Structure probing data (2A3) for a 207-nucleotide construct. The RNA was probed in 150 mM KOAc, 10 mM MgCl2 and 150 mM bicine (pH 8.5) at 24 C. Values cover nucleotides 27 to 156.
RNA sequence: GGGAACGACUCGAGUAGAGUCGAAAACGCAUGCGAAAGCAUGCGGCUAUGCUAAUGCAUGGCGACCGCGAUCAAGUAGAGUAGGCGGCGAUAGUGGUUAUUAUUCCGCUAUCGAUUACCAGUGUCUGUUAUUAUUCAGAUACAUGGACCUCUACGACCGAUGGACGUACUUCGGUACGUCCAUCGGAAAAGAAACAACAACAACAAC
Reactivity to 2A3 in 0.01 (KOAc 150mM, MgCl2 10mM, bicine 150mM(pH8.5), 24C), signal-to-noise 1, nucleotides 027 to 156: c000g010c000a010u010g040c000g170a180a040a030g000c000a000u000g000c000g050g000c000u000a000u000g030c150u300a300a000u300g000c000a000u000g000g070c020g070a100c000c000g000c010g090a030u200c110a150a000g000u020a000g020a000g010u070a070g070g060c000g000g030c000g030a020u000a020g000u000g050g000u020u120a090u160u080a290u300u000c020c030g000c000u000a000u000c000g000a030u030u060a120c020c020a000g000u040g030u000c000u000g060u010u010a180u180u090a160u090u300c000a000g000a000u000a000c030a040u040g000g010a030c030c000u030c000u030a000c000g000a010